Record summary:
This 177-nucleotide RNA was probed chemically with DMS and 2A3. For 2A3, 3,013 sequencing reads were counted. The RNA was probed in 150 mM KOAc, 10 mM MgCl2 and 150 mM bicine (pH 8.5) at 24 C. The data come from the RNA Mapping Database (RMDB), library TTRDES.

RNA sequence: GGGAACGACUCGAGUAGAGUCGAAAAGAUAUGGAGUGUGUAGGGAGCGUCGUGGUCGGAAACGACCACACGCGAAGAACUACCACUCCUAAGUCAAAACCAGGUCGAAGUUCGCUUCGACCUGGAAGGCGUUACUAAAGUUCGCUUUAGUAACGCCAAAAGAAACAACAACAACAAC
Reactivity to DMS in 0.01 (KOAc 150mM, MgCl2 10mM, bicine 150mM(pH8.5), 24C), signal-to-noise 1, nucleotides 027 to 126: g010a090u000a160u020g020g000a080g010u000g000u070g020u010a030g000g000g000a090g080c070g050u000c300g120u010g010g020u000c010g030g000a010a000a020c000g030a020c000c000a000c000a010c000g000c000g010a040a150g000a210a300c030u000a000c020c010a000c020u000c000c000u010a000a050g020u010c000a060a070a190a250c000c020a050g000g000u000c000g000a010a050g010u000u040c300g020c000u000u000c000g020a000c000c020u020g020g000a030a010
Reactivity to 2A3 in 0.01 (KOAc 150mM, MgCl2 10mM, bicine 150mM(pH8.5), 24C), signal-to-noise 1, nucleotides 027 to 126: g000a010u030a030u130g010g010a000g000u010g030u040g010u030a010g000g060g080a200g020c000g010u050c110g050u040g000g020u020c000g000g000a000a000a000c000g010a020c000c000a000c000a000c020g020c010g050a290a070g030a000a010c000u000a000c010c000a000c000u010c000c000u000a000a000g000u000c020a000a010a120a210c010c000a020g040g020u020c000g000a000a000g020u070u190c250g100c260u040u000c010g000a000c000c000u000g010g010a010a000